[RMDB]
RNA sequence: GGGAACGACUCGAGUAGAGUCGAAAAUACAUCCGGCAGCGGUCAGGUAAGGCAAACCACGGUUUGGAGGGUGGUUCUCGGCUGAGACCGCCGCGUGCUCUAUCUCCGGUCCAAAAUAAAAAUUUAACUUCCUAUCUCUUUUCGAAGAGAUAGGAAGAAAAGAAACAACAACAACAAC
Reactivity to DMS in 0.01 (KOAc 150mM, MgCl2 10mM, bicine 150mM(pH8.5), 24C), signal-to-noise 3, nucleotides 027 to 126: u020a110c150a130u010c030c030g010g020c040a100g010c030g020g000u000c080a140g010g010u010a070a130g010g010c010a120a040a030c030c020a020c060g030g010u000u000u010g030g000a080g000g020g040u000g000g010u000u000c080u000c190g020g020c050u010g010a120g000a010c000c010g000c020c020g000c020g010u000g010c020u010c060u010a060u010c010u000c000c020g020g030u010c020c090a030a060a060a110u020a050a050a060a070a120u030u010u000a090a120
Reactivity to 2A3 in 0.01 (KOAc 150mM, MgCl2 10mM, bicine 150mM(pH8.5), 24C), signal-to-noise 3, nucleotides 027 to 126: u080a010c000a050u020c040c030g020g000c000a000g000c020g020g040u090c080a100g050g070u100a160a090g050g000c020a050a000a010c010c000a030c060g050g110u090u210u270g130g040a090g030g120g010u010g020g000u050u030c080u070c080g160g030c040u020g020a030g080a070c000c010g010c000c020g010c000g020u060g000c000u020c010u060a140u050c030u000c000c010g020g050u030c050c030a060a030a080a060u220a030a120a020a040a030u070u180u100a060a030